[RMDB]
RNA sequence: GGGAACGACUCGAGUAGAGUCGAAAAGGAGAUCGAAGAGGACCGACGUCAGCACGGUCCGGAUGUAGGUCCGCAUGCAUCCGAGUUGACGAAACUUGACGAUUUCCAAAGCGGACAAGAAGUCAAACACGUAGGUACUCUUCGGAGUACCUACGUGAAAAGAAACAACAACAACAAC
Reactivity to 2A3 in 0.01 (KOAc 150mM, MgCl2 10mM, bicine 150mM(pH8.5), 24C), signal-to-noise 4, nucleotides 027 to 126: g010g020a010g000a010u030c020g040a140a010g050a090g080g020a000c040c000g060a070c030g140u230c100a020g020c170a030c050g050g000u010c000c010g000g000a000u000g000u000a000g010g010u000c000c000g000c000a000u010g000c000a010u010c000c000g010a010g020u000u040g100a120c110g060a080a020a020c010u000u030g030a030c000g000a010u010u000u010c000c000a070a030a020g000c010g010g030a000c000a020a040g190a090a020g130u090c070a060a000a000
Reactivity to DMS in 0.01 (KOAc 150mM, MgCl2 10mM, bicine 150mM(pH8.5), 24C), signal-to-noise 3, nucleotides 027 to 126: g020g000a010g000a000u000c000g060a200a060g010a240g000g020a090c080c050g050a190c060g020u030c230a070g030c070a110c040g010g000u020c000c010g020g000a000u000g010u000a020g000g020u000c000c000g030c000a060u010g000c000a000u000c010c000g010a050g010u030u010g000a120c260g020a200a020a040c000u000u000g010a300c030g020a020u010u000u000c010c000a020a050a030g030c020g000g000a020c000a170a080g000a180a080g010u030c090a050a070a160